RNA sequence: GGGAACGACUCGAGUAGAGUCGAAAAGGCCCAAACUUAGUAGCCCCAAGUGGGUAAAAGGCAUGGUUAUUCAAAACCGUUCAAAGCAUACGACGCUCGUCGUUAGGUUUUGCUUUGAACGGUCGCACAGAAGUAUUGGGUUCGCCCAAUACUUCUGAAAAGAAACAACAACAACAAC
Reactivity to DMS in 0.01 (KOAc 150mM, MgCl2 10mM, bicine 150mM(pH8.5), 24C), signal-to-noise 2, nucleotides 027 to 126: g000g020c010c000c300a100a040a100c000u000u000a090g010u030a230g000c010c010c000c040a070a140g050u000g050g010g000u000a010a050a180a220g000g010c100a280u000g040g000u000u000a140u000u010c060a060a070a110a060c010c000g010u010u000c000a000a010a010g010c000a010u010a030c020g000a020c000g000c070u010c270g010u020c000g030u000u000a080g010g000u000u000u000u000g010c010u000u000u000g000a000a000c000g000g000u000c030g000c220a180
Reactivity to 2A3 in 0.01 (KOAc 150mM, MgCl2 10mM, bicine 150mM(pH8.5), 24C), signal-to-noise 2, nucleotides 027 to 126: g100g000c040c010c000a000a010a010c020u040u000a040g050u050a010g100c020c010c000c060a300a020g080u300g170g020g000u010a010a010a000a000g020g000c030a060u110g100g000u140u080a090u190u130c010a020a060a040a020c000c000g010u000u010c010a000a000a000g030c010a030u000a020c000g020a000c000g040c110u270c230g300u140c000g020u030u050a170g050g090u110u150u070u020g010c000u010u000u010g010a000a010c000g000g020u000c000g000c020a070
Source: RMDB library RFMREP, as collected in RNAgym. Structure probing data (DMS and 2A3) for a 177-nucleotide construct. The reactions ran in a buffer of 150 mM KOAc, 10 mM MgCl2 and 150 mM bicine (pH 8.5), at 24 C. In probing experiments dimethyl sulfate is read out at A N1 and C N3, which are open when not base-paired. Reactivities are given for positions 27 through 126.